RNA sequence: GGGAACGACUCGAGUAGAGUCGAAAAGGCCCGGCCACCAGGGUUUGGAGAGCACUCCGGGCCGAAGGGUUGAGUAGCAUCCAGAGGGAGGAAUCCACGCAGAGUAGAACGGAGAAAUCACCUCCAGCAACUAUAACAACUUCGGUUGUUAUAGUUGAAAAGAAACAACAACAACAAC
Reactivity to DMS in 0.01 (KOAc 150mM, MgCl2 10mM, bicine 150mM(pH8.5), 24C), signal-to-noise 3, nucleotides 027 to 126: g010g000c000c000c010g010g010c290c030a120c060c090a060g020g000g010u000u010u010g010g020a100g020a130g020c140a080c120u010c020c010g010g000g010c000c010g010a060a040g000g000g010u000u000g010a090g000u000a060g010c100a070u000c020c030a080g020a100g010g020g010a060g000g000a140a110u000c000c040a070c110g010c080a050g010a080g010u000a080g020a050a090c160g000g000a050g000a040a090a100u010c110a130c070c010u000c010c020a180g000
Reactivity to 2A3 in 0.01 (KOAc 150mM, MgCl2 10mM, bicine 150mM(pH8.5), 24C), signal-to-noise 1, nucleotides 027 to 126: g020g000c000c010c000g000g020c050c030a060c010c010a040g090g090g000u150u110u040g050g010a100g000a010g140c030a020c120u000c010c000g010g020g000c030c020g000a030a040g060g000g000u040u020g000a040g020u070a020g020c030a040u060c040c000a020g040a070g050g040g000a040g050g000a050a040u020c020c000a030c080g020c030a060g020a000g200u090a030g020a100a020c040g050g010a000g010a070a140a010u140c060a060c040c010u030c000c000a010g010